[RMDB]
RNA sequence: GGGAACGACUCGAGUAGAGUCGAAAAUCGGUUGUUUCUCUGAAGGCAUGAUCACCCCGUCCGCUGCGGAAGUUCGUGCUUCCGUCGAACGCGAAAGUCGGACGGCGGCCAUGAGUCGCAACGCAAAUAUACAUUUAGUAGUUCGCUACUAAAUGAACAUAAAACGUCCCUUCGGGGACGUUUUAUGAAAAGAAACAACAACAACAAC
Reactivity to 2A3 in 0.01 (KOAc 150mM, MgCl2 10mM, bicine 150mM(pH8.5), 24C), signal-to-noise 1, nucleotides 027 to 156: u150c030g020g020u000u020g010u000u040u000c050u000c030u130g170a080a090g060g000c040a090u030g010a060u070c010a010c000c000c000c010g010u000c010c000g000c040u040g010c000g020g030a000a000g030u130u300c190g070u300g040c020u010u000c010c000g040u010c010g090a160a000c090g050c020g120a060a000a050g120u220c000g000g000a000c020g000g040c100g040g020c000c000a030u120g000a010g070u150c050g000c100a000a080c070g030c110a020a130a020u100a020u020a010c010a000u010u000u000a000g000u000a000g000u000u160c180g010c140u000a000c000u000a000a000a000u030g020a010a000

Chemical mapping of a 207-nucleotide RNA with 2A3. The reactions ran in a buffer of 150 mM KOAc, 10 mM MgCl2 and 150 mM bicine (pH 8.5), at 24 C. The data come from the RNA Mapping Database (RMDB), library M2RFPK. For 2A3 the reverse transcriptase was SuperScript II with manganese.